[RMDB]
Structure probing data (DMS and 2A3) for a 177-nucleotide construct. 2A3 is a SHAPE reagent: it acylates the 2'-hydroxyl of flexible nucleotides of all four kinds. DMS adducts were read by reverse transcription with MarathonRT. The 2A3 profile rests on 891 reads.

RNA sequence: GGGAACGACUCGAGUAGAGUCGAAAACCGCUCCUUUGACCGGGAUCCCAUCGCAGCCGCCAGCUUGGGACAGGUGCACAGAGCAGUCUCGCACAGCGGGGAGCAGGUUGUGGUGAAGGUGCAGCGGCCACCUCUAUUCCUUCGGGAAUAGAGGUGGAAAAGAAACAACAACAACAAC
Reactivity to DMS in 0.01 (KOAc 150mM, MgCl2 10mM, bicine 150mM(pH8.5), 24C), signal-to-noise 1, nucleotides 027 to 126: c010c020g000c080u000c020c040u000u010u000g010a110c090c080g000g000g010a120u000c030c030c000a030u010c130g030c030a120g020c030c020g010c040c050a160g000c020u020u000g030g010g000a060c130a080g020g000u020g060c040a090c190a080g000a160g000c040a050g020u000c030u010c060g020c060a050c090a100g030c050g010g000g030g000a040g060c060a050g020g000u000u000g020u000g010g050u000g000a080a080g020g000u000g020c110a110g010c030g010g010
Reactivity to 2A3 in 0.01 (KOAc 150mM, MgCl2 10mM, bicine 150mM(pH8.5), 24C), signal-to-noise 1, nucleotides 027 to 126: c000c000g050c040u050c010c010u040u030u170g100a020c000c060g030g100g110a110u030c000c010c010a040u060c020g020c010a030g110c050c000g000c010c000a050g040c050u050u020g010g060g010a030c000a100g040g130u090g000c050a080c020a060g120a050g020c000a010g030u060c020u020c040g000c040a100c040a160g000c020g090g130g000g000a060g050c040a080g030g050u100u040g110u120g080g050u050g050a100a020g010g040u070g000c020a010g040c050g000g000